This 177-nucleotide RNA was probed chemically with 2A3 and DMS. Values cover nucleotides 27 to 126. Source: RMDB library OK2TRN, as collected in RNAgym. The RNA was probed in 150 mM KOAc, 10 mM MgCl2 and 150 mM bicine (pH 8.5) at 24 C.

[RMDB]
RNA sequence: GGGAACGACUCGAGUAGAGUCGAAAACACUGUGACUCUGUGUGACACUCUGUCUCAGUCACACUGUGUCACUCUGAGAGUCACAGACACUCUCUCAGUCAGUCUCAGUGUGACUCUCACACAGAGAGUGCCAUCCGUGAUUCGUCACGGAUGGCACAAAAGAAACAACAACAACAAC
Reactivity to 2A3 in 0.01 (KOAc 150mM, MgCl2 10mM, bicine 150mM(pH8.5), 24C), signal-to-noise 1, nucleotides 027 to 126: c100a010c020u030g020u010g020a020c000u040c010u010g020u000g000u000g040a000c000a000c030u070c040u050g090u030c020u060c270a100g070u170c020a010c000a000c030u010g030u000g000u020c010a010c020u000c020u060g160a040g010a000g040u000c000a000c010a060g010a000c000a010c000u030c000u000c000u030c000a010g000u000c020a020g030u000c000u010c040a010g010u020g060u090g060a100c080u010c020u060c120a020c000a000c040a010g030a010g000a030
Reactivity to DMS in 0.01 (KOAc 150mM, MgCl2 10mM, bicine 150mM(pH8.5), 24C), signal-to-noise 1, nucleotides 027 to 126: c230a270c030u000g020u020g020a000c000u000c000u010g000u010g010u000g030a010c020a030c020u010c060u000g030u000c090u000c130a140g010u010c090a060c000a010c000u000g020u000g000u000c000a010c000u000c080u010g000a050g040a030g020u000c010a050c010a030g010a200c100a000c000u000c010u040c000u000c020a020g030u000c000a090g000u000c000u000c020a190g010u000g040u010g000a050c030u000c200u010c020a140c190a050c140a110g000a000g010a070